The data come from the RNA Mapping Database (RMDB), library OK3TST. This 207-nucleotide RNA was probed chemically with 2A3. Values cover nucleotides 27 to 156. The reactions ran in a buffer of 150 mM KOAc, 10 mM MgCl2 and 150 mM bicine (pH 8.5), at 24 C. For 2A3 the reverse transcriptase was SuperScript II with manganese.
RNA sequence: GGGAACGACUCGAGUAGAGUCGAAAAGUUGCCCAUGUGACAUAUCCAAGCAGGUGAUGGGGAAGAGACUCUGUUCAUAAUAUUCACUUAGUGACCCAGGCCCACGGAGGGUCCAUGCCCAUCCACGUUUCCGUAGUCACUGAGGCAGGGAGAAGAGGCUGCAGUCACUCUUCGGAGUGACUGCAGCAAAAGAAACAACAACAACAAC
Reactivity to 2A3 in 0.01 (KOAc 150mM, MgCl2 10mM, bicine 150mM(pH8.5), 24C), signal-to-noise 1, nucleotides 027 to 156: g090u070u020g030c030c040c040a060u180g000u020g010a000c000a040u210a080u070c100c040a030a000g000c000a000g050g070u090g030a010u020g000g000g030g030a060a000g040a000g010a000c010u000c010u100g070u220u070c090a090u040a300a000u030a040u070u130c000a010c050u040u100a030g000u060g090a010c000c000c020a040g040g000c100c000c000a020c110g010g130a070g020g000g040u030c000c010a040u260g000c030c000c000a000u000c010c010a010c030g010u000u030u010c030c020g010u080a130g000u070c000a000c000u030g000a100g010g000c020a010g110g000g000a240g100a020a100g010a100g190